This 177-nucleotide RNA was probed chemically with DMS. For DMS the reverse transcriptase was MarathonRT. The data come from the RNA Mapping Database (RMDB), library TTRINS. DMS (dimethyl sulfate) methylates the pairing face of unpaired adenines and cytosines. Reactivities are given for positions 27 through 126.
RNA sequence: GGGAACGACUCGAGUAGAGUCGAAAAGAUAUGGAUGUGAACUACAGCAGAAGAAGCGUUGAAAGUGGGAUAAUGUCGGAAACGACAUUAUCCCACUGGAGCUUCGGAUGCUGCACAUCCUAAGUCACAGCUCUAAAAAGUUCGCUUUUUAGAGCUGAAAAGAAACAACAACAACAAC
Reactivity to DMS in 0.01 (KOAc 150mM, MgCl2 10mM, bicine 150mM(pH8.5), 24C), signal-to-noise 2, nucleotides 027 to 126: g020a010u000a300u010g010g000a030u000g030u000g000a130a040c130u070a300c040a010g030c000a020g000a300a190g010a000a010g020c000g010u020u030g000a140a070a010g000u000g000g000g010a010u010a020a000u000g000u000c000g000g010a090a070a230c000g020a000c000a000u000u000a000u010c000c000c000a000c040u000g030g000a080g030c000u020u000c000g000g010a300u000g000c010u000g000c010a010c000a000u000c000c000u000a020a050g000u030c020a280